An RNA of 177 nucleotides, treated with DMS and 2A3 and read out base by base. For DMS the reverse transcriptase was MarathonRT. The reactions ran in a buffer of 150 mM KOAc, 10 mM MgCl2 and 150 mM bicine (pH 8.5), at 24 C. 2A3 adducts were read by reverse transcription with SuperScript II with manganese.
[RMDB]
RNA sequence: GGGAACGACUCGAGUAGAGUCGAAAAGAAAGGCAGCCAGUGCAGCCCACGCAGCGGCAUGCUUUUGCAUGCCCAGUCGAGCCCACGACUGAGGGCAGCUGCGACACUGAGGGCAGCUGCCGAAAGACGCAUAGUAGGCGUUCGCGCCUACUAUGCGAAAAGAAACAACAACAACAAC
Reactivity to DMS in 0.01 (KOAc 150mM, MgCl2 10mM, bicine 150mM(pH8.5), 24C), signal-to-noise 2, nucleotides 027 to 126: g000a080a130a090g000g010c000a020g000c020c100a120g000u000g020c120a110g000c020c120c100a180c050g010c050a040g000c030g010g040c010a050u000g000c010u010u030u000u000g020c000a060u000g000c000c000c000a000g010u000c000g000a140g000c000c010c020a300c000g000a010c000u010g020a210g010g000g050c160a060g000c010u020g030c000g010a210c190a090c210u000g010a100g000g000g000c010a100g000c000u000g000c010c000g020a010a050a090g000a160
Reactivity to 2A3 in 0.01 (KOAc 150mM, MgCl2 10mM, bicine 150mM(pH8.5), 24C), signal-to-noise 2, nucleotides 027 to 126: g130a020a090a020g000g000c000a000g020c060c050a100g100u130g140c070a020g020c050c000c000a040c010g030c000a000g020c010g000g000c000a000u000g040c000u250u260u200u300g000c010a010u020g000c010c000c010a000g000u010c000g010a060g020c000c000c000a030c000g010a000c000u030g000a060g000g290g070c010a010g010c000u010g000c000g010a040c050a040c140u140g060a210g020g030g030c000a000g000c010u010g000c020c000g000a000a020a010g070a010